RNA sequence: GGGAACGACUCGAGUAGAGUCGAAAAGUUGUGUAACUUCAUUUAAAUGAAUUGAAACAAAUUUAAUACAAGUGGAUGUAGGAUAACCGUCCGUCCUUCACAUUGGUAUAAAAGUGAUCUAAAAUUCGGCAGGGACGAGUCUUCGGACUCGUCCCAAGUGUAGCAAAUAGUUCGCUAUUUGCUACACAAAAGAAACAACAACAACAAC
Reactivity to 2A3 in 0.01 (KOAc 150mM, MgCl2 10mM, bicine 150mM(pH8.5), 24C), signal-to-noise 1, nucleotides 027 to 156: g050u020u010g010u030g010u020a030a110c070u010u010c090a240u150u100u230a100a190a080u130g020a010a010u030u000g000a010a080a000c020a030a270a020u130u200u060a060a040u090a040c040a090a040g000u000g040g040a020u040g000u080a080g020g020a010u030a130a140c130c030g040u000c010c000g110u130c000c000u000u000c010a010c020a140u020u000g140g010u040a020u020a130a040a020a000g000u020g030a030u020c010u080a030a090a060a220u010u040c070g110g030c050a040g030g010g000a000c000g010a000g000u020c000u000u000c040g000g000a000c000u000c000g050u000c000c000c000a000a000

This 207-nucleotide RNA was probed chemically with 2A3. 2A3 adducts were read by reverse transcription with SuperScript II with manganese. The 2A3 profile rests on 473 reads. Reactivities are rounded to 0.1 and cut off at 0 and 3. It was measured as part of the RMDB library M2RFPK.